[RMDB]
An RNA of 177 nucleotides, treated with DMS and 2A3 and read out base by base. The RNA was probed in 150 mM KOAc, 10 mM MgCl2 and 150 mM bicine (pH 8.5) at 24 C. It was measured as part of the RMDB library TTRDEL.
RNA sequence: GGGAACGACUCGAGUAGAGUCGAAAAGAUAUGGAAUAUCAUGCCUUCGAUGAAAUCGGAAACGAUGGAGAAGGACAUGAGUAUUCCUAAGUCAAAAGCUGACUGAUGGUUCGCCAUCAGUCAGCAACACAGGUGUAACCUUCGGGUUACACCUGUGAAAAGAAACAACAACAACAAC
Reactivity to DMS in 0.01 (KOAc 150mM, MgCl2 10mM, bicine 150mM(pH8.5), 24C), signal-to-noise 1, nucleotides 027 to 126: g010a000u040a300u000g000g010a000a040u000a010u000c000a020u000g010c010c000u000u000c000g000a210u000g000a070a070a010u010c010g010g000a120a070a300c010g010a010u000g000g000a080g000a040a010g010g000a040c000a010u000g010a010g010u000a010u010u000c010c000u030a040a130g030u010c020a090a100a160a120g000c010u000g000a030c000u000g000a000u000g000g030u000u020c230g010c060c020a000u010c000a000g010u000c000a000g040c000a030a110
Reactivity to 2A3 in 0.01 (KOAc 150mM, MgCl2 10mM, bicine 150mM(pH8.5), 24C), signal-to-noise 1, nucleotides 027 to 126: g050a000u160a000u170g010g040a000a000u000a000u020c010a010u000g000c020c010u050u050c060g300a300u090g010a030a030a000u000c000g020g050a070a060a060c000g000a000u030g000g020a030g020a000a030g060g040a000c000a010u010g020a000g000u010a020u000u010c000c000u010a130a010g100u020c030a040a140a000a130g070c010u000g000a000c010u020g040a000u050g000g220u120u100c300g060c150c000a000u020c000a010g000u020c000a010g040c010a030a000
About this RNA: Values are in units of 0.01, from 0 to 300, in steps of 10.